[RMDB]
RNA sequence: GGGAACGACUCGAGUAGAGUCGAAAAGAAUCAGCAACCCGGGAAGCAGCAGAAAAUGCUCGAAGAGUAUCAGAAUUGGAACAUGAACGUCAUGAAGUUCGACGUCUCUCCGAUGCAAUGCAUAUAAGUAUCCGGAUAAUUUCGAUUAUCCGGAUACAAAAGAAACAACAACAACAAC
Reactivity to DMS in 0.01 (KOAc 150mM, MgCl2 10mM, bicine 150mM(pH8.5), 24C), signal-to-noise 4, nucleotides 027 to 126: g010a120a060u000c050a110g000c060a070a140c050c010c030g000g000g010a090a090g020c060a060g000c060a090g010a060a090a090a080u000g010c010u010c010g010a050a040g020a050g010u010a030u000c070a100g030a060a070u000u000g000g000a080a080c050a050u000g000a100a120c170g000u000c020a060u010g020a100a090g010u000u000c040g000a050c100g020u000c020u000c020u000c010c000g000a030u020g010c010a070a090u000g010c050a080u010a060u000a060a130
Reactivity to 2A3 in 0.01 (KOAc 150mM, MgCl2 10mM, bicine 150mM(pH8.5), 24C), signal-to-noise 2, nucleotides 027 to 126: g010a010a060u060c030a020g060c020a080a070c030c000c000g030g050g000a100a000g030c070a010g000c010a000g050a050a230a020a090u060g000c010u000c030g050a060a000g050a020g030u060a040u200c090a060g080a070a020u080u100g080g020a110a010c030a080u010g040a140a030c070g110u040c040a040u100g060a150a010g050u050u090c030g030a020c040g050u000c000u000c000u000c010c010g010a010u080g000c020a000a080u060g000c070a060u150a010u000a300a030